[RMDB]
RNA sequence: GGGAACGACUCGAGUAGAGUCGAAAAGAUAUGGAUUCCCGUAGACAUGUUCUCGUGGUCGGAAACGACCACACGCGAGAACAACAGCUACAGGGAAUCCUAAGUCAAAGUACACUUCGGUGUACAACAAUCAAUUGUUCUUCGGAACAAUUGAUUGAAAAGAAACAACAACAACAAC
Reactivity to 2A3 in 0.01 (KOAc 150mM, MgCl2 10mM, bicine 150mM(pH8.5), 24C), signal-to-noise 4, nucleotides 027 to 126: g030a030u090a050u180g000g000a010u000u000c000c010c010g000u000a000g010a080c140a210u220g000u010u000c010u010c040g110u160g020g000u010c010g020g010a060a080a040c000g010a000c000c000a030c010a010c080g130c070g010a000g000a020a000c000a020a010c080a060g070c010u030a020c130a260g010g000g000a010a000u010c000c000u000a070a010g000u000c040a130a090a060g010u010a010c030a000c010u060u140c300g120g000u010g000u010a000c000a000a010
Reactivity to DMS in 0.01 (KOAc 150mM, MgCl2 10mM, bicine 150mM(pH8.5), 24C), signal-to-noise 5, nucleotides 027 to 126: g000a040u000a300u010g010g010a030u000u000c000c000c010g000u010a010g000a040c070a240u000g010u000u000c000u000c000g020u000g000g030u000c010g000g000a090a100a150c000g020a020c010c020a040c080a020c270g030c160g010a010g000a010a010c010a060a070c230a190g010c000u000a000c010a170g050g000g010a020a000u000c000c000u000a010a090g010u000c020a140a070a130g010u000a000c000a010c000u000u010c210g060g010u000g010u000a000c010a110a190